Chemical mapping of a 177-nucleotide RNA with 2A3 and DMS.
The RNA was probed in 150 mM KOAc, 10 mM MgCl2 and 150 mM bicine (pH 8.5) at 24 C.
The 2A3 profile rests on 3,391 reads.
Reactivities are given for positions 27 through 126.
DMS adducts were read by reverse transcription with MarathonRT.
Source: RMDB library OK2TST, as collected in RNAgym.
RNA sequence: GGGAACGACUCGAGUAGAGUCGAAAAAUUCAAAAGGCUGUUUCAGCUGAGGUAAUGCCUGAUGAGGCCGUCAUUUCUGUAGACCAGCACGGUGAUGUGAAAUCACACUUUGCCAAGAAUGACAUUCAUUCCCGUCUAUUUUCGAAUAGACGGGAAUAAAAGAAACAACAACAACAAC
Reactivity to 2A3 in 0.01 (KOAc 150mM, MgCl2 10mM, bicine 150mM(pH8.5), 24C), signal-to-noise 4, nucleotides 027 to 126: a000u050u050c020a050a000a020a020g030g000c030u050g070u120u080u130c030a120g050c120u110g070a020g030g070u090a070a060u140g020c000c020u070g030a090u030g010a020g040g060c040c020g030u010c000a030u050u180u070c020u020g050u060a030g020a090c020c000a000g000c020a000c060g010g040u010g010a290u020g070u020g140a180a100a070u180c010a000c000a000c020u030u050u040g020c010c000a020a020g010a020a020u030g010a000c020a030u130u080c030
Reactivity to DMS in 0.01 (KOAc 150mM, MgCl2 10mM, bicine 150mM(pH8.5), 24C), signal-to-noise 6, nucleotides 027 to 126: a120u000u000c050a030a060a170a110g000g010c010u000g010u000u000u010c060a110g020c120u010g010a070g020g020u000a080a060u010g020c010c010u000g010a250u010g010a060g010g000c110c160g000u000c020a020u000u000u000c030u000g010u000a080g000a250c060c040a150g000c050a030c220g000g000u010g000a060u010g010u000g010a070a110a070u010c040a020c020a050c060u000u000u000g000c010c030a080a050g010a040a030u000g010a030c020a160u010u010c120